[RMDB]
The record gives the reactivity of an RNA of 177 nucleotides to 2A3 and DMS.
The 2A3 profile rests on 1,832 reads.
For 2A3 the reverse transcriptase was SuperScript II with manganese.
It was measured as part of the RMDB library OK2TRN.

RNA sequence: GGGAACGACUCGAGUAGAGUCGAAAACGAUGGAUGCCUUUUAAAGCAAAUUGAUGCUUCUCAAAGUGGACAAUCUGCUCAUCUUGACGCUCGCGAAAACUCGAUCCAAGACAGGCAUAGUAGAUCGAUCCGAAUGAACUUUCGAGUUCAUUCGGAUAAAAGAAACAACAACAACAAC
Reactivity to 2A3 in 0.01 (KOAc 150mM, MgCl2 10mM, bicine 150mM(pH8.5), 24C), signal-to-noise 2, nucleotides 027 to 126: c000g010a030u080g040g090a010u050g010c000c020u000u180u040u220a090a100a010g000c010a030a060a040u010u080g070a060u110g000c000u070u030c050u030c130a180a210a010g040u090g110g030a160c020a000a070u020c030u010g000c000u010c040a090u010c030u000u020g010a040c090g020c030u030c030g060c040g010a080a060a070a100c050u030c020g020a010u000c010c020a030a010g070a090c040a000g030g000c020a020u020a020g140u020a030g010a080u010c020g010
Reactivity to DMS in 0.01 (KOAc 150mM, MgCl2 10mM, bicine 150mM(pH8.5), 24C), signal-to-noise 3, nucleotides 027 to 126: c060g020a070u000g020g030a070u000g010c020c010u000u000u030u000a090a110a070g030c020a020a090a050u000u010g010a170u000g010c030u000u010c170u020c210a050a030a030g010u000g020g020a080c050a040a030u000c040u010g000c010u000c050a130u000c030u010u000g010a090c200g010c150u000c030g010c040g000a070a050a080a130c130u000c030g000a030u000c010c030a050a100g000a110c300a010g000g000c050a040u000a070g020u010a090g000a040u000c080g000